This 177-nucleotide RNA was probed chemically with 2A3 and DMS. Conditions: 150 mM KOAc, 10 mM MgCl2 and 150 mM bicine (pH 8.5), 24 C. Reactivities are given for positions 27 through 126. For DMS, 998 sequencing reads were counted.
RNA sequence: GGGAACGACUCGAGUAGAGUCGAAAAUAGAUUCAUACAGCAUCCACACAGCAGUGUAUGGACAUUCAUUAAGACGCUCAUCAAUAUCAUCCUUCUUUAGGUUGUGUGGUGGGGUUAUGGUAAAUUCCACUCCGGAGGGAUUCGUCCCUCCGGAGUGAAAAGAAACAACAACAACAAC
Reactivity to 2A3 in 0.01 (KOAc 150mM, MgCl2 10mM, bicine 150mM(pH8.5), 24C), signal-to-noise 1, nucleotides 027 to 126: u180a040g100a170u050u000c020a000u010a070c000a030g000c010a010u130c070c000a000c000a030c000a120g090c020a030g180u040g010u130a010u030g000g000a000c020a080u050u100c010a010u110u100a010a030g060a000c030g060c240u000c000a040u070c020a070a040u050a160u150c000a010u040c010c010u060u250c120u090u240u200a040g040g030u100u010g000u030g000u000g040g000u030g000g000g000g000u000u010a060u190g050g000u040a080a080a030u150u000c080
Reactivity to DMS in 0.01 (KOAc 150mM, MgCl2 10mM, bicine 150mM(pH8.5), 24C), signal-to-noise 1, nucleotides 027 to 126: u000a160g020a100u020u010c000a010u000a040c030a080g010c060a150u000c010c060a030c140a050c120a160g000c030a090g030u000g010u030a010u000g000g000a030c070a100u000u000c030a050u010u000a090a080g000a060c050g000c030u000c070a020u010c030a020a140u010a090u000c020a010u000c020c000u000u010c290u000u020u000a000g010g000u000u000g000u020g000u010g010g040u000g000g000g000g000u000u000a050u000g020g000u000a050a070a140u000u010c030